[RMDB]
RNA sequence: GGGAACGACUCGAGUAGAGUCGAAAAGGUACCUGACAUGGCUAGCUAGUGAUCACGGAUCGACUAGUGAGUAGAGUACGAUCGCUAGCAUCACUCACAUGCAUGUCAUGCAGCAGUCGUACAGCGAGCUCCACCUAGAGUUCGCUCUAGGUGGAGCAAAAGAAACAACAACAACAAC
Reactivity to 2A3 in 0.01 (KOAc 150mM, MgCl2 10mM, bicine 150mM(pH8.5), 24C), signal-to-noise 2, nucleotides 027 to 126: g060g000u060a030c000c000u030g020a020c030a060u080g100g020c010u030a060g000c000u020a030g030u010g030a000u050c030a050c300g180g050a090u070c040g060a070c010u020a070g060u030g100a000g030u110a040g010a040g070u100a070c070g020a010u010c030g000c070u000a000g000c010a000u010c000a020c010u050c010a060c020a120u140g070c020a020u100g000u030c000a000u020g000c020a020g000c000a020g050u110c050g020u050a050c040a030g010c060g040a040
Reactivity to DMS in 0.01 (KOAc 150mM, MgCl2 10mM, bicine 150mM(pH8.5), 24C), signal-to-noise 2, nucleotides 027 to 126: g000g030u010a040c000c010u010g000a090c050a040u010g010g020c000u000a170g010c000u000a040g010u010g000a020u000c020a180c240g000g000a070u000c040g000a040c020u000a130g020u000g020a050g020u000a140g010a170g020u020a070c110g000a050u000c010g030c010u000a050g020c030a070u020c090a030c030u000c080a120c140a130u020g000c060a040u010g010u000c040a040u000g010c020a060g010c050a010g010u000c050g010u000a030c060a150g010c120g010a160
Source: RMDB library OK2TRN, as collected in RNAgym. Chemical mapping of a 177-nucleotide RNA with 2A3 and DMS. For DMS, 1,676 sequencing reads were counted. Reactivities are given for positions 27 through 126. The reactions ran in a buffer of 150 mM KOAc, 10 mM MgCl2 and 150 mM bicine (pH 8.5), at 24 C.